[RMDB]
RNA sequence: GGGAACGACUCGAGUAGAGUCGAAAAGUAGCUGCAGACAUGCGGAUGAUUACAUCUGAUGUAAUCCCAUGAGUUAUAAGAACGUCCUAUGGGAACUGUGGAGCGUGAUUGAGCUCGAGAAUCAUGGAGUAGCUUGCUUAUUCGUAAGCAAGCUACUAAAAGAAACAACAACAACAAC
Reactivity to 2A3 in 0.01 (KOAc 150mM, MgCl2 10mM, bicine 150mM(pH8.5), 24C), signal-to-noise 3, nucleotides 027 to 126: g090u090a000g000c000u000g000c010a020g000a090c000a000u150g110c000g000g000a010u020g010a020u020u300a150c010a010u030c040u030g030a050u000g030u040a020a180u000c030c020c000a010u060g020a020g060u110u150a250u060a250a050g130a070a010c020g200u080c000c020u040a010u000g030g010g000a030a050c000u010g000u070g070g080a010g010c010g020u010g020a100u020u100g060a030g010c010u020c070g050a030g050a110a100u090c080a070u060g020g000
Reactivity to DMS in 0.01 (KOAc 150mM, MgCl2 10mM, bicine 150mM(pH8.5), 24C), signal-to-noise 4, nucleotides 027 to 126: g000u010a070g020c020u000g010c040a020g010a110c120a040u000g000c070g000g000a040u010g000a150u010u000a040c020a010u010c080u010g020a060u000g000u000a080a050u000c010c020c000a090u030g000a080g010u000u020a090u010a090a030g000a120a050c030g020u010c020c030u010a060u000g010g030g050a090a210c040u000g020u000g010g000a060g020c020g000u000g000a150u010u010g000a070g010c020u000c000g000a080g000a040a080u020c090a040u000g000g010

Chemical mapping of a 177-nucleotide RNA with 2A3 and DMS. DMS adducts were read by reverse transcription with MarathonRT. The reactions ran in a buffer of 150 mM KOAc, 10 mM MgCl2 and 150 mM bicine (pH 8.5), at 24 C. The data come from the RNA Mapping Database (RMDB), library OK1LIB. Reactivities are given for positions 27 through 126. High 2A3 reactivity points to a flexible backbone, as in loops and unpaired stretches. For DMS, 7,285 sequencing reads were counted.